[RMDB]
RNA sequence: GGGAACGACUCGAGUAGAGUCGAAAACAACACGUCCUCGUCGUACAGAGUGGUAACAUGUGUCACCACAUAUCCAAGCUUGGGUACACGGGCUUGACCCAACCCCUUGGGCGGAUGGUGGCACAUCAAAAGAAGUAACACUUCGGUGUUACUUCAACCACUGAAUGGGCUUCGGCCCAUUCAGUGGAAAAGAAACAACAACAACAAC
Reactivity to 2A3 in 0.01 (KOAc 150mM, MgCl2 10mM, bicine 150mM(pH8.5), 24C), signal-to-noise 1, nucleotides 027 to 156: c040a010a080c030a030c090g120u040c000c000u010c000g150u030c040g100u200a030c060a040g080a060g040u040g000g130u240a080a000c010a150u000g000u000g000u000c000a020c040c000a030c070a140u220a020u090c000c000a000a010g010c070u010u030g040g010g000u000a040c040a040c060g010g020g000c030u230u300g160a300c000c000c010a000a080c000c000c000c000u000u050g000g000g000c010g000g000a000u000g000g010u000g000g000c030a000c000a000u000c000a000a020a010a020g000a000a000g000u000a000a000c000a000c000u050u220c220g030g000u000g000u010u000a010c000u020u000c000a000a020
An RNA of 207 nucleotides, treated with 2A3 and read out base by base. 2A3 adducts were read by reverse transcription with SuperScript II with manganese.